[RMDB]
RNA sequence: GGGAACGACUCGAGUAGAGUCGAAAACAGCAGCCACUGGAGAGGCACAAGUGGUUCCUGAGCAUUUUGCUGUCAGGGAAGGCAUAGGUUCAGGUGAAUAUGUGUAAGCACUCAUCUUCUAGGAUGCUGGAAUGUGUCGAGAUAUCGCUUCAGCUGAAUGUUGUAUGGUGUUCGCACCAUACAACAUAAAAGAAACAACAACAACAAC
Reactivity to DMS in 0.01 (KOAc 150mM, MgCl2 10mM, bicine 150mM(pH8.5), 24C), signal-to-noise 2, nucleotides 027 to 156: c020a070g010c080a100g000c030c060a040c040u020g000g010a090g020a090g030g020c000a030c050a090a110g020u000g010g010u000u000c030c020u000g020a090g020c030a170u000u000u010u000g000c010u000g020u010c040a120g030g000g020a140a300g010g030c030a060u000a100g010g020u000u000c020a070g000g040u000g020a090a090u000a090u000g020u000g000u000a090a120g020c020a030c060u000c070a140u010c030u000u000c020u000a130g030g020a090u010g020c020u000g010g020a080a060u000g010u010g000u000c020g010a150g010a130u000a070u000c060g000c040u010u000c040a090g000c050u000g000a120
Reactivity to 2A3 in 0.01 (KOAc 150mM, MgCl2 10mM, bicine 150mM(pH8.5), 24C), signal-to-noise 8, nucleotides 027 to 156: c020a010g060c020a010g020c020c030a050c060u030g020g030a090g010a030g090g020c030a020c020a080a050g030u020g050g000u090u070c020c000u020g010a020g000c020a050u040u060u110u180g020c030u040g060u120c080a080g020g010g100a050a040g010g010c020a030u040a050g000g040u010u030c020a010g040g020u050g080a090a030u150a080u130g080u010g030u100a070a020g040c010a040c060u040c020a090u010c030u120u010c010u030a050g110g040a060u050g070c040u030g020g070a060a070u150g050u010g050u060c030g020a000g010a070u120a040u070c070g000c010u080u060c030a040g010c020u030g060a140